[RMDB]
Chemical mapping of a 177-nucleotide RNA with DMS and 2A3. The data come from the RNA Mapping Database (RMDB), library 15KREP. For 2A3 the reverse transcriptase was SuperScript II with manganese. Values cover nucleotides 27 to 126. For DMS the reverse transcriptase was MarathonRT. Conditions: 150 mM KOAc, 10 mM MgCl2 and 150 mM bicine (pH 8.5), 24 C.
RNA sequence: GGGAACGACUCGAGUAGAGUCGAAAAGAUGCCACCACUGCAUAUGCCAAUAGUGUCUUUAACAUUUUGCAGGCGACAACUGCUAAUGUCAGUGCACUUAUGGGUGCUAAUGGCAACAAGAUUGUUGGAGAAUUGUAUUGUUCGCAAUACAAUUCUCAAAAGAAACAACAACAACAAC
Reactivity to DMS in 0.01 (KOAc 150mM, MgCl2 10mM, bicine 150mM(pH8.5), 24C), signal-to-noise 4, nucleotides 027 to 126: g010a150u020g000c050c020a060c110c050a110c150u010g010c010a040u000a160u000g010c030c010a040a300u010a040g020u000g000u000c070u000u000u010a070a030c010a030u010u000u000u020g010c000a020g020g000c100g020a130c300a100a090c040u000g000c010u010a010a020u000g020u000c080a050g000u010g010c010a010c000u000u000a160u000g010g000g010u020g010c010u000a120a110u000g010g000c000a030a080c110a060a070g020a200u010u010g010u010u000g020
Reactivity to 2A3 in 0.01 (KOAc 150mM, MgCl2 10mM, bicine 150mM(pH8.5), 24C), signal-to-noise 3, nucleotides 027 to 126: g070a030u050g020c000c000a010c050c020a070c100u120g000c040a000u090a060u230g120c000c010a050a030u030a070g010u010g000u000c020u000u130u060a040a020c010a010u050u060u100u110g000c000a010g060g030c030g150a040c040a100a040c010u010g000c000u030a000a010u000g000u020c030a020g020u010g130c000a000c000u050u030a040u110g030g000g010u000g000c000u030a050a030u040g020g000c000a010a020c010a000a040g130a240u080u150g070u110u130g060